Chemical mapping of a 177-nucleotide RNA with 2A3 and DMS.
As a SHAPE reagent, 2A3 marks flexible, mostly unpaired nucleotides at the ribose 2'-OH.
2A3 adducts were read by reverse transcription with SuperScript II with manganese.
DMS adducts were read by reverse transcription with MarathonRT.
The data come from the RNA Mapping Database (RMDB), library OK2TST.
Reactivities are given for positions 27 through 126.
RNA sequence: GGGAACGACUCGAGUAGAGUCGAAAAAGAUGUUGGCGCAUUACAACAUAGGAUAUCAAGGAUACCACUUGCCUGAUGGCUAUAAAGACAGAACAUACUCAUUCAUGCGAAACUUCCAACCGAUGUACCUAAAUAUCACUUUCGAGUGAUAUUUAGGAAAAGAAACAACAACAACAAC
Reactivity to 2A3 in 0.01 (KOAc 150mM, MgCl2 10mM, bicine 150mM(pH8.5), 24C), signal-to-noise 7, nucleotides 027 to 126: a000g090a040u090g000u030u020g050g030c040g010c050a040u050u120a060c030a100a000c010a060u060a050g040g040a070u030a010u140c040a070a080g070g000a020u050a130c010c030a050c100u040u100g030c010c000u050g060a060u070g030g000c020u040a030u040a140a110a000g050a020c030a030g040a060a020c020a070u120a080c030u020c050a050u090u020c020a010u050g010c010g010a070a030a030c020u050u000c020c020a040a040c010c020g030a020u090g050u120a070
Reactivity to DMS in 0.01 (KOAc 150mM, MgCl2 10mM, bicine 150mM(pH8.5), 24C), signal-to-noise 8, nucleotides 027 to 126: a080g000a070u000g010u000u000g010g010c090g030c050a040u000u000a080c090a060a070c080a050u000a060g010g000a110u000a060u010c050a070a100g010g010a080u000a070c090c060a080c090u000u000g010c020c030u000g010a080u000g010g010c050u000a060u000a050a060a070g010a070c110a040g000a050a050c110a070u000a050c080u010c050a080u010u000c060a050u000g010c030g010a070a040a070c070u000u000c010c030a050a110c080c050g010a070u010g010u000a140